[RMDB]
RNA sequence: GGGAACGACUCGAGUAGAGUCGAAAAGCCCAACUACCCUACAGACCGCGAUAACCUCGGGAAACUGAGGCCAAUAGCGGAUAUCACUCUCAUGCUGGAGUGCAGAGAGUGAGAAACGUUCCGGCGCCUUAAAGGAUCUCUUCGGAGAUCCUUUAAGAAAAGAAACAACAACAACAAC
Reactivity to DMS in 0.01 (KOAc 150mM, MgCl2 10mM, bicine 150mM(pH8.5), 24C), signal-to-noise 2, nucleotides 027 to 126: g000c000c010c000a160a120c210u000a180c060c040c020u010a100c120a150g010a160c010c000g020c000g000a060u000a170a300c000c000u000c000g020g000g000a080a100a150c000u000g000a020g010g030c010c040a050a090u000a110g010c010g000g000a110u020a080u000c000a000c000u000c000u000c000a070u000g000c000u000g020g040a140g000u000g020c000a060g000a020g000a020g010u000g000a010g010a060a040a110c110g000u000u000c030c020g010g020c050g010c130